[RMDB]
RNA sequence: GGGAACGACUCGAGUAGAGUCGAAAAAUUUAGAAUGGGACGAUGAGUUAUUAGAACUACUUACAGUACCUAAAAAUAUGUUGCCAGAAGUUAAACCUUCAAGUGAAAUAUAUGGUAAGACAAUUGAUGUGUUUGUUUAUUUCGAUAAACAAACACAAAAAGAAACAACAACAACAAC
Reactivity to DMS in 0.01 (KOAc 150mM, MgCl2 10mM, bicine 150mM(pH8.5), 24C), signal-to-noise 2, nucleotides 027 to 126: a070u000u000u010a070g020a170a070u000g020g020g030a070c080g010a090u010g010a040g000u000u000a150u010u020a100g010a120a080c160u010a060c030u000u010a060c130a160g000u000a060c040c000u000a020a020a070a120a070u010a010u000g000u000u000g000c020c070a160g000a060a060g000u000u000a050a070a110c220c010u000u000c120a030a090g020u020g000a070a010a050u000a080u010a060u010g000g000u000a040a110g000a050c110a020a060u000u000g000a200
Chemical mapping of a 177-nucleotide RNA with DMS. Values cover nucleotides 27 to 126. The data come from the RNA Mapping Database (RMDB), library OK2TST.